Background:
An RNA of 177 nucleotides, treated with 2A3 and DMS and read out base by base.
RNA sequence: GGGAACGACUCGAGUAGAGUCGAAAAGUAUUGAUGAGCAUUCGAAGCAACCUACAGGCAACAUAUGUUGACAGUGCAGACUUUGAAGGGAAAAGAUCUGGACUUGCCCAGAGACCUGGCACUUGCCCUGCUCGUAGUGAUUCGUCACUACGAGCAGAAAAGAAACAACAACAACAAC
Reactivity to 2A3 in 0.01 (KOAc 150mM, MgCl2 10mM, bicine 150mM(pH8.5), 24C), signal-to-noise 1, nucleotides 027 to 126: g060u040a020u120u210g050a050u010g020a050g080c000a000u040u040c060g010a040a010g050c000a040a040c010c000u100a080c050a050g080g060c000a020a020c030a090u170a060u300g070u030u100g100a040c030a010g000u050g060c020a000g010a070c030u050u040u110g030a070a050g040g000g060a030a100a000a050g000a110u000c010u040g010g000a020c080u020u090g080c040c000c020a040g020a000g020a080c010c000u010g010g000c000a040c090u060u060g010c010c010
Reactivity to DMS in 0.01 (KOAc 150mM, MgCl2 10mM, bicine 150mM(pH8.5), 24C), signal-to-noise 2, nucleotides 027 to 126: g010u020a070u000u000g000a050u000g010a100g020c050a070u000u000c080g020a060a150g000c030a050a050c070c040u030a060c060a060g000g000c030a020a050c080a110u010a070u000g020u000u000g000a060c090a060g030u010g020c040a010g000a090c060u000u000u000g030a130a110g000g020g010a080a030a050a060g000a090u000c020u010g000g000a090c050u000u000g000c050c010c010a110g000a090g010a090c100c060u000g010g000c060a040c090u000u000g010c050c030
The RNA was probed in 150 mM KOAc, 10 mM MgCl2 and 150 mM bicine (pH 8.5) at 24 C.
It was measured as part of the RMDB library OK2TRN.
For DMS the reverse transcriptase was MarathonRT.